[RMDB]
Record summary:
Chemical mapping of a 207-nucleotide RNA with 2A3 and DMS. For 2A3 the reverse transcriptase was SuperScript II with manganese. The DMS profile rests on 5,292 reads. The reactions ran in a buffer of 150 mM KOAc, 10 mM MgCl2 and 150 mM bicine (pH 8.5), at 24 C.
RNA sequence: GGGAACGACUCGAGUAGAGUCGAAAAGCAGUUCCAGAGUCUGUGGACUCUGAAUACUAGCGGUCUGUCGUCGUCCACAGACGACGUGAAGUGAUUAUGAGAAUGAUCACACAGACGACGUAUUCUCAUAUGUCCUAUCGCUAGGAACUGGAUAGGCAGGACUAGUAAUGUUCGCAUUACUAGUCCUAAAAGAAACAACAACAACAAC
Reactivity to 2A3 in 0.01 (KOAc 150mM, MgCl2 10mM, bicine 150mM(pH8.5), 24C), signal-to-noise 2, nucleotides 027 to 156: g070c000a010g010u020u000c020c000a010g010a000g010u030c050u160g160u270g170g010a000c000u000c010u030g020a020a030u090a090c020u030a020g130c030g000g020u000c020u030g040u020c010g010u000c000g010u010c060c070a140c030a130g010a000c000g000a010c000g030u070g100a150a050g030u040g030a000u000u030a010u040g050a030g040a130a040u060g010a040u030c010a010c000a010c000a040g040a040c040g010a020c050g040u040a050u060u020c050u000c030a040u070a060u190g060u050c010c010u030a040u050c010g030c140u080a050g060g020a020a020c040u020g020g010a040u070a040g050g000c080
Reactivity to DMS in 0.01 (KOAc 150mM, MgCl2 10mM, bicine 150mM(pH8.5), 24C), signal-to-noise 3, nucleotides 027 to 156: g020c020a030g020u000u010c050c010a050g010a040g020u000c030u000g010u010g050g020a010c000u000c000u010g010a080a040u010a110c000u000a140g040c020g020g030u010c040u010g010u000c010g060u000c000g030u010c020c140a210c240a250g010a030c000g030a020c010g040u010g010a150a140g020u000g010a040u000u000a020u000g010a300g000a210a060u000g000a050u010c000a070c040a260c030a100g000a070c050g000a060c050g030u000a050u000u000c070u010c030a090u020a090u000g010u010c010c040u000a080u000c010g030c010u010a090g040g010a020a040c010u000g000g010a160u010a020g010g030c140